RNA sequence: GGGAACGACUCGAGUAGAGUCGAAAAGAUAUGGAAGGUCGAAGAACGCUACCUGAAUCGUCUUCGGAAACGAAGACGUGAGUAGCGGGAGACCCUUCCUAAGUCAAAAGAUGCCUUCGGGCAUCAACCCGUAAUUCACGUUCGCGUGAAUUACGGGAAAAGAAACAACAACAACAAC
Reactivity to DMS in 0.01 (KOAc 150mM, MgCl2 10mM, bicine 150mM(pH8.5), 24C), signal-to-noise 2, nucleotides 027 to 126: g020a010u000a300u020g000g010a050a000g020g000u020c020g010a120a110g040a300a200c020g010c000u000a000c000c130u010g020a090a060u000c020g000u000c010u010u000c000g020g000a070a030a150c000g020a020a010g000a010c000g030u000g000a120g000u000a010g040c000g000g000g010a140g000a050c140c040c010u000u010c050c000u030a010a140g000u000c040a060a060a200a110g010a000u000g000c000c000u000u000c140g000g000g030c010a000u000c000a090a120
Reactivity to 2A3 in 0.01 (KOAc 150mM, MgCl2 10mM, bicine 150mM(pH8.5), 24C), signal-to-noise 1, nucleotides 027 to 126: g000a020u060a010u200g000g000a020a000g000g060u040c040g130a260a060g060a170a010c020g030c020u030a020c020c100u140g040a060a120u130c030g000u010c000u010u010c000g040g010a100a040a050c050g010a000a000g010a010c010g000u060g010a020g010u020a000g000c000g000g020g000a030g010a000c090c110c000u000u000c000c000u000a160a030g050u010c010a000a070a070a070g020a000u020g030c000c030u070u170c290g130g000g000c000a010u000c010a010a020
Structure probing data (DMS and 2A3) for a 177-nucleotide construct. For 2A3 the reverse transcriptase was SuperScript II with manganese. The 2A3 profile rests on 1,969 reads. It was measured as part of the RMDB library TTRDEL. The reactions ran in a buffer of 150 mM KOAc, 10 mM MgCl2 and 150 mM bicine (pH 8.5), at 24 C.